The record gives the reactivity of an RNA of 177 nucleotides to DMS and 2A3. DMS adducts were read by reverse transcription with MarathonRT. For 2A3 the reverse transcriptase was SuperScript II with manganese. Conditions: 150 mM KOAc, 10 mM MgCl2 and 150 mM bicine (pH 8.5), 24 C. The 2A3 profile rests on 14,594 reads.
RNA sequence: GGGAACGACUCGAGUAGAGUCGAAAAUACGCCAAUUUCGAUUGGCGUAACACGCAAACCGGCCGAAAGGCAUUUUAUGCGUACGGUGGCGAAAGCCUAAAUACGCACUGUCAUUCGUGACAGUGAACAUACCCCUACCAUUCGUGGUAGGGGUAUGAAAAGAAACAACAACAACAAC
Reactivity to DMS in 0.01 (KOAc 150mM, MgCl2 10mM, bicine 150mM(pH8.5), 24C), signal-to-noise 6, nucleotides 027 to 126: u000a010c010g010c000c010a020a010u000u000u020c170g010a030u000u000g010g010c000g020u000a010a070c170a070c110g010c110a040a090a140c110c110g010g030c000c010g010a070a100a160g010g010c010a050u000u000u010u000a110u010g000c000g020u000a040c130g000g020u000g010g010c000g000a070a070a150g010c000c000u000a080a070a060u010a060c100g000c000a040c010u000g010u000c000a050u000u020c170g020u000g000a020c010a000g010u000g010a050a150
Reactivity to 2A3 in 0.01 (KOAc 150mM, MgCl2 10mM, bicine 150mM(pH8.5), 24C), signal-to-noise 6, nucleotides 027 to 126: u050a000c000g000c010c000a010a010u040u070u110c220g140a020u000u010g000g000c010g000u000a000a020c030a000c030g040c020a040a050a060c020c030g070g010c000c010g060a090a020a020g010g010c010a010u010u040u000u040a090u070g010c000g010u020a070c080g110g090u050g010g010c010g050a080a020a010g000c000c000u030a040a050a020u170a040c070g010c030a010c000u010g000u000c000a030u050u060c170g110u020g000a010c000a010g000u000g050a020a010